[RMDB]
An RNA of 207 nucleotides, treated with 2A3 and read out base by base. 2A3 adducts were read by reverse transcription with SuperScript II with manganese.
RNA sequence: GGGAACGACUCGAGUAGAGUCGAAAAUGGUAGUCCGCCAAUCUAAGGGGACGCCUUUAGAAGAAGAGGCUAGGUGGUAUUCCGGUGUGGGAUACUUGGUAAUAUGUAACGCUAAUUGCAUAAGAUUAAAACUUUGCAUACUUCGGUAUGCAAAGAAGGGAUCAUUUAUCUUCGGAUAAAUGAUCCCAAAAGAAACAACAACAACAAC
Reactivity to 2A3 in 0.01 (KOAc 150mM, MgCl2 10mM, bicine 150mM(pH8.5), 24C), signal-to-noise 2, nucleotides 027 to 156: u040g050g000u020a200g000u000c030c060g100c130c030a070a060u080c100u250a110a120g010g000g000g000a010c030g020c000c010u020u050u050a110g000a140a010g000a020a020g010a010g060g020c090u030a030g040g030u020g030g010u050a060u030u010c000c030g120g040u150g020u080g000g000g000a030u030a040c000u000u030g050g040u050a040a030u030a080u130g060u020a050a000c010g000c050u020a110a120u140u070g000c010a000u030a130a060g050a100u040u240a000a050a000a090c000u020u010u000g000c000a010u000a000c000u020u020c020g030g000u000a000u010g000c000a000a000a000g000a000a000